The data come from the RNA Mapping Database (RMDB), library VIROID. This 177-nucleotide RNA was probed chemically with 2A3 and DMS. The RNA was probed in 150 mM KOAc, 10 mM MgCl2 and 150 mM bicine (pH 8.5) at 24 C.
[RMDB]
RNA sequence: GGGAACGACUCGAGUAGAGUCGAAAAGCAUAUCCAUGCAACUUGACAACCAAUGUCGCCCAUGAUGACACUCCCGAAAGCGGGACGUGACACUCUCCCCCACCAAAACAAGGUGUACGUCCUCGUAGUAGUACCAGUUGUUCGCAACUGGUACUACAAAAGAAACAACAACAACAAC
Reactivity to 2A3 in 0.01 (KOAc 150mM, MgCl2 10mM, bicine 150mM(pH8.5), 24C), signal-to-noise 1, nucleotides 027 to 126: g000c010a020u030a090u120c120c020a010u020g040c040a030a170c080u020u130g040a040c010a090a130c110c020a160a200u110g040u020c000g060c000c010c010a080u150g080a160u010g040a020c030a000c110u080c000c010c010g090a090a010a030g060c010g000g000g000a000c000g030u170g130a040c000a000c010u290c040u110c030c020c070c000c000a150c000c080a010a070a000a010c080a040a060g080g010u030g000u010a000c000g010u000c010c020u130c010g010u010a090
Reactivity to DMS in 0.01 (KOAc 150mM, MgCl2 10mM, bicine 150mM(pH8.5), 24C), signal-to-noise 1, nucleotides 027 to 126: g000c050a010u040a130u010c120c180a060u010g010c020a160a100c130u080u000g000a030c100a010a090c160c050a130a120u020g090u000c070g000c000c100c000a060u010g000a050u010g010a050c190a050c090u000c000c000c000g000a090a110a040g010c020g010g000g000a020c010g040u000g000a020c000a060c000u010c110u050c010c010c000c000c020a070c240c090a040a050a040a070c180a020a070g040g020u000g000u000a000c020g000u000c020c010u000c030g080u000a040